Conditions: 150 mM KOAc, 10 mM MgCl2 and 150 mM bicine (pH 8.5), 24 C. The record gives the reactivity of an RNA of 207 nucleotides to 2A3.
RNA sequence: GGGAACGACUCGAGUAGAGUCGAAAAGGGUGAUGUCUCCUAACCUUUAUCAAUGGGGGCACUCGGUCGUUCUGUGGGUAGAAAUUUUAUUUCGUGCCUACCUUAGACGCUUGUCGUCGGGAGUAUGUGGGACUGAUGAACUUCGGUUCAUCAGUAAGCAAAUUAGAUGCUUCGGCAUCUAAUUUGCAAAAGAAACAACAACAACAAC
Reactivity to 2A3 in 0.01 (KOAc 150mM, MgCl2 10mM, bicine 150mM(pH8.5), 24C), signal-to-noise 1, nucleotides 027 to 156: g020g010g020u130g010a030u010g010u000c010u020c010c000u030a090a120c040c030u100u300u210a220u170c230a050a100u280g000g000g000g020g000c000a000c010u000c000g000g000u010c000g000u000u000c000u020g040u020g010g000g050u020a010g060a000a060a050u080u210u170u140a190u000u200u080c020g020u100g010c000c000u010a100c000c000u010u090a020g000a000c010g060c110u210u300g070u220c010g000u000c000g000g070g000a070g010u090a140u200g050u190g030g090g040a010c000u000g000a000u020g000a000a000c000u070u050c220g050g000u010u020c000a000u000c000a000g000u000a010a010
Description: The 2A3 profile rests on 483 reads.